The record gives the reactivity of an RNA of 207 nucleotides to 2A3 and DMS.
RNA sequence: GGGAACGACUCGAGUAGAGUCGAAAAUGUCGGCAAGCUCUAUAUAUGGACACUUACGAAGGGUUUUGGUUGUUUUGUAUCUCAAGCCGACUUUGAGUAUUUGAGGAAAAUACGACCGAAAAAACAAAUAGACCGGUAUCCUUCGGGAUACCGGUAACACAUACUUACGUUUCGACGUAAGUAUGUGAAAAGAAACAACAACAACAAC
Reactivity to 2A3 in 0.01 (KOAc 150mM, MgCl2 10mM, bicine 150mM(pH8.5), 24C), signal-to-noise 2, nucleotides 027 to 156: u070g000u000c010g000g000c070a090a050g000c030u000c060u060a060u030a070u060a060u300g020g060a040c050a040c130u140u160a120c150g090a110a080g060g020g000u020u040u110u080g080g010u030u020g010u000u020u000u020g060u080a120u170c030u000c050a030a000g000c000c000g010a010c000u000u010u020g020a030g000u010a040u000u040u010g090a160g000g170a000a030a000a070u050a030c010g000a020c020c000g140a130a070a010a010a000a000c080a010a080a010u150a040g120a000c000c010g000g000u000a000u000c000c010u030u040c190g030g000g010a000u000a000c000c000g000g000u000a000a000
Reactivity to DMS in 0.01 (KOAc 150mM, MgCl2 10mM, bicine 150mM(pH8.5), 24C), signal-to-noise 2, nucleotides 027 to 156: u000g020u020c010g000g020c010a100a090g010c060u010c030u000a080u020a170u000a100u000g020g000a070c030a060c040u000u000a160c070g000a080a110g010g010g040u010u000u040u000g030g040u000u000g020u010u000u010u000g020u010a090u000c030u020c000a070a240g000c040c000g020a040c040u000u000u000g010a210g000u000a080u000u010u010g000a220g000g000a170a080a030a070u000a010c000g010a150c050c020g050a010a030a040a050a100a160c060a030a060a080u000a140g000a080c000c000g020g020u000a000u000c000c010u000u010c300g050g020g000a030u000a000c000c000g000g000u000a000a000

For 2A3 the reverse transcriptase was SuperScript II with manganese.